[RMDB]
RNA sequence: GGGAACGACUCGAGUAGAGUCGAAAAUUUUCUAUCUAUAGAUAGAGAAUUUUCUUAUUUAGACUUUGUGUCUACUCUUCUCAACUAAACGAAAUUUUUCUAGUGCUGUCAUUUGUUAUGGCAGUCCUCAUACAAGUCGUUUCGACGACUUGUAUGAAAAAGAAACAACAACAACAAC
Reactivity to 2A3 in 0.01 (KOAc 150mM, MgCl2 10mM, bicine 150mM(pH8.5), 24C), signal-to-noise 9, nucleotides 027 to 126: u000u000u000u000c000u010a010u000c010u020a300u120a300g000a000u000a000g000a000g000a000a000u010u030u010u000c010u070u270a300u190u070u080a010g000a000c010u100u150u300g130u160g010u050c000u000a010c020u010c000u070u050c020u000c020a050a170c080u170a170a040a070c050g170a140a130a170u140u150u020u040u030c050u050a040g030u020g080c000u010g010u020c000a020u030u100u130g150u170u150a010u010g000g000c000a000g000u010c000c000
Reactivity to DMS in 0.01 (KOAc 150mM, MgCl2 10mM, bicine 150mM(pH8.5), 24C), signal-to-noise 2, nucleotides 027 to 126: u000u040u010u000c000u000a010u000c000u040a250u090a190g000a030u010a000g000a040g010a010a010u000u000u010u000c000u020u020a130u010u010u010a030g000a020c000u000u070u070g010u050g000u050c010u020a040c160u010c010u000u000c000u010c000a120a190c170u070a040a060a110c140g010a060a070a210u010u020u010u000u010c050u020a060g000u030g010c010u000g000u010c000a000u000u010u010g010u040u030a080u000g030g010c010a000g030u010c120c140

The record gives the reactivity of an RNA of 177 nucleotides to 2A3 and DMS. Source: RMDB libraries RFM100 and RFMREP, as collected in RNAgym. For 2A3 the reverse transcriptase was SuperScript II with manganese. The reactions ran in a buffer of 150 mM KOAc, 10 mM MgCl2 and 150 mM bicine (pH 8.5), at 24 C.